Source information: The record gives the reactivity of an RNA of 207 nucleotides to 2A3 and DMS. The RNA was probed in 150 mM KOAc, 10 mM MgCl2 and 150 mM bicine (pH 8.5) at 24 C. In probing experiments dimethyl sulfate is read out at A N1 and C N3, which are open when not base-paired. For 2A3, 487 sequencing reads were counted. For 2A3 the reverse transcriptase was SuperScript II with manganese.
RNA sequence: GGGAACGACUCGAGUAGAGUCGAAAAUGUCGGCAAGCUCUAUAUAUGGACAGUUACGAAGGGUUUUGGUUGUUUUGUAUCUCAAGCCGACUUUGAGUAUUUGAGGAAAAUACGACAGAAAAAACAAAUAGACCGGUAUCCUUCGGGAUACCGGUAAUCUAAAUUAAUGAUUCGUCAUUAAUUUAGAAAAAGAAACAACAACAACAAC
Reactivity to 2A3 in 0.01 (KOAc 150mM, MgCl2 10mM, bicine 150mM(pH8.5), 24C), signal-to-noise 1, nucleotides 027 to 156: u100g010u020c000g000g000c080a090a030g020c020u000c010u090a180u020a080u040a130u300g000g100a150c120a080g030u100u150a060c030g110a120a100g000g010g020u100u120u140u100g050g000u010u000g020u040u040u020u040g040u040a120u000c030u000c060a020a090g000c000c000g000a010c000u030u050u040g000a000g000u010a040u000u040u090g040a090g040g110a000a020a000a030u020a020c050g050a000c060a010g190a070a090a030a000a000a000c010a030a090a030u100a000g080a010c000c000g000g020u000a000u000c000c040u010u080c140g020g000g000a000u010a000c060c000g000g000u000a000a000
Reactivity to DMS in 0.01 (KOAc 150mM, MgCl2 10mM, bicine 150mM(pH8.5), 24C), signal-to-noise 2, nucleotides 027 to 156: u010g010u000c010g010g020c030a160a160g010c010u000c010u010a130u010a190u000a160u010g020g000a080c040a110g000u000u000a060c060g010a120a120g020g030g010u000u000u000u000g030g000u000u000g010u000u010u000u020g010u010a060u000c010u010c010a070a180g020c020c000g010a020c020u000u000u020g000a230g000u000a030u010u010u000g000a210g000g000a170a020a020a080u000a040c020g000a210c070a130g010a000a030a050a100a110a110c000a020a070a130u000a100g010a050c000c000g030g020u000a000u000c000c000u010u000c300g070g030g030a000u010a000c000c010g020g010u000a000a020

Record summary
Reactivities are given for positions 27 through 156.